[RMDB]
RNA sequence: GGGAACGACUCGAGUAGAGUCGAAAACAGUGUAAGUCAACCUAUAUAGGUAAGAUUCAACUGGGGUUUCACAUAUCGGCACAUAGAGAUUUAGCUUUAGUAACAUCGUAUCGUGGCGCCAUCAUACGACACUGAAAGCAUUCGUGCUUUCAGUGUCAAAAGAAACAACAACAACAAC
Reactivity to DMS in 0.01 (KOAc 150mM, MgCl2 10mM, bicine 150mM(pH8.5), 24C), signal-to-noise 3, nucleotides 027 to 126: c030a070g000u020g030u000a120a110g030u000c020a210a060c020c010u000a190u000a160u010a010g010g030u010a070a120g010a050u000u000c120a170a080c030u000g010g000g010g010u010u000u000c020a090c130a050u000a050u000c100g000g010c070a050c120a040u010a040g000a100g000a090u000u000u000a140g020c070u000u000u000a060g010u010a040a080c110a000u000c060g030u000a010u000c140g030u000g000g010c080g010c040c030a050u010c110a050u010a100c220
Reactivity to 2A3 in 0.01 (KOAc 150mM, MgCl2 10mM, bicine 150mM(pH8.5), 24C), signal-to-noise 2, nucleotides 027 to 126: c000a010g060u050g050u140a100a030g040u040c020a000a050c020c010u070a090u080a060u170a300g010g000u030a090a060g000a030u110u000c060a020a010c060u010g040g000g080g020u000u070u140c080a090c010a010u140a060u130c120g050g000c010a010c020a040u050a030g060a030g010a060u020u020u140a030g010c060u100u090u020a030g030u050a050a000c010a080u040c020g030u030a070u100c030g030u020g040g000c040g000c040c000a030u030c000a010u080a130c120
Source information
This 177-nucleotide RNA was probed chemically with DMS and 2A3. DMS (dimethyl sulfate) methylates the pairing face of unpaired adenines and cytosines. Conditions: 150 mM KOAc, 10 mM MgCl2 and 150 mM bicine (pH 8.5), 24 C. It was measured as part of the RMDB library OK2TRN. The DMS profile rests on 2,110 reads. The 2A3 profile rests on 1,452 reads.